[RMDB]
RNA sequence: GGGAACGACUCGAGUAGAGUCGAAAAGAUGUGGACCAAAAGAUGCCUGGAUGGAAGUGGCUUAAACCCGAGGAGGCAGCAAGGAUGAUAGGACCGUGCCCCCAUGAGGAGAGGGCCCUAUGAGGAAGAGGUAAUUACGGUUCGCCGUAAUUACCUCAAAAGAAACAACAACAACAAC
Reactivity to 2A3 in 0.01 (KOAc 150mM, MgCl2 10mM, bicine 150mM(pH8.5), 24C), signal-to-noise 1, nucleotides 027 to 126: g090a040u150g070u020g050g020a060c030c030a020a020a040a120g150a040u110g000c000c010u040g020g000a040u020g070g030a020a050g030u060g060g000c000u020u040a250a090a000c010c000c010g010a060g030g010a060g010g060c010a010g040c040a090a000g030g000a000u140g010a030u100a110g040g020a040c010c010g060u080g040c020c010c000c000c020a020u060g020a000g070g000a000g000a020g000g000g070c000c000c000u170a180u160g100a080g090g000a060a220
Reactivity to DMS in 0.01 (KOAc 150mM, MgCl2 10mM, bicine 150mM(pH8.5), 24C), signal-to-noise 2, nucleotides 027 to 126: g030a100u000g030u000g030g010a080c060c040a060a100a110a090g010a100u010g000c060c000u000g000g000a070u000g020g000a090a060g020u000g030g000c100u030u010a010a130a170c060c020c030g020a120g030g000a090g010g020c020a020g010c150a070a140g000g020a130u020g000a090u000a070g000g000a040c020c060g000u000g000c000c020c020c010c010a060u010g000a080g020g010a050g000a250g000g000g010c040c040c000u000a050u010g000a070g010g010a150a110